The data come from the RNA Mapping Database (RMDB), library OK3TST. An RNA of 207 nucleotides, treated with DMS and 2A3 and read out base by base. The DMS profile rests on 4,924 reads.
[RMDB]
RNA sequence: GGGAACGACUCGAGUAGAGUCGAAAAGGGGGGAAGAAGUAAUAUACAUAAAUUCUAGAGAAUGUCAGUGUUCGGAGUUAAGCUUUGACCUCCUAGCACACACAGGUCUUGUACUUGAGAUUUCUCUCAGCAUGGACAAGGAACAAGGACAAAGGGAAUCCUUUGUCCGGUUCGCCGGACAAAGGAUAAAAGAAACAACAACAACAAC
Reactivity to DMS in 0.01 (KOAc 150mM, MgCl2 10mM, bicine 150mM(pH8.5), 24C), signal-to-noise 3, nucleotides 027 to 156: g000g040g010g040g040g030a000a080g000a080a110g000u010a080a110u000a100u010a160c050a120u000a070a050a130u000u020c020u010a090g010a130g000a070a040u000g010u010c020a110g030u010g020u000u000c060g000g000a070g040u000u000a070a200g030c070u000u000u000g010a170c200c010u000c000c010u000a080g010c010a050c040a150c040a090c030a040g000g000u010c030u000u010g010u000a050c060u010u010g010a140g000a200u010u010u010c070u000c020u000c060a070g000c050a060u000g010g010a050c030a050a170g010g040a030a060c020a060a080g010g000a040c020a020a070a080g020g030g030a190
Reactivity to 2A3 in 0.01 (KOAc 150mM, MgCl2 10mM, bicine 150mM(pH8.5), 24C), signal-to-noise 4, nucleotides 027 to 156: g010g000g000g020g000g000a010a000g000a000a010g000u070a010a080u120a020u070a190c020a000u120a070a110a030u140u020c040u070a050g000a010g020a160a030u080g060u140c120a040g030u040g010u100u030c050g010g000a030g020u040u080a100a020g050c070u110u090u190g060a090c010c000u000c000c000u010a010g010c010a010c000a000c000a000c000a040g050g000u020c030u060u110g070u130a090c030u030u060g010a020g010a120u070u180u040c040u000c000u010c040a020g020c030a050u090g030g010a010c010a030a020g030g000a050a020c040a060a040g100g020a010c030a020a050a070g060g010g060a080
The reactions ran in a buffer of 150 mM KOAc, 10 mM MgCl2 and 150 mM bicine (pH 8.5), at 24 C. 2A3 adducts were read by reverse transcription with SuperScript II with manganese.